[RMDB]
RNA sequence: GGGAACGACUCGAGUAGAGUCGAAAAACCACAGUUGAGGUAGUUAAGAAUAUGUGAUGCCUUUCGGGAAUCAUUCACUUAUUCUUCCUGCCUCACCUGUGACAAAACCAUCUGGUUCGCCAGAUGGCGUAACGCUCUUGUUCGCAAGAGCGUUACGAAAAGAAACAACAACAACAAC
Reactivity to 2A3 in 0.01 (KOAc 150mM, MgCl2 10mM, bicine 150mM(pH8.5), 24C), signal-to-noise 3, nucleotides 027 to 126: a010c020c000a000c000a010g010u010u010g010a010g010g010u000a010g000u030u300a050a010g000a020a000u000a010u020g020u000g010a010u020g020c010c020u200u240u280c220g040g020g050a030a080u230c020a050u170u090c000a000c010u000u010a010u010u000c000u020u000c000c000u000g010c000c000u000c000a000c000c000u010g010u010g010a000c030a000a080a010a050c000c000a000u000c000u000g050g000u050u060c120g020c080c000a000g000a010u000g000g010
Reactivity to DMS in 0.01 (KOAc 150mM, MgCl2 10mM, bicine 150mM(pH8.5), 24C), signal-to-noise 2, nucleotides 027 to 126: a090c080c000a000c020a000g000u000u000g030a020g010g030u000a030g000u000u000a040a000g030a020a000u000a000u010g000u000g010a030u000g040c070c000u000u000u020c300g010g000g010a290a060u010c160a040u010u000c010a010c030u000u000a010u000u000c000u000u010c300c030u000g010c010c000u010c000a000c030c000u030g000u010g020a160c180a040a020a060a180c010c000a010u000c000u000g000g030u000u000c130g000c010c000a020g000a010u000g000g000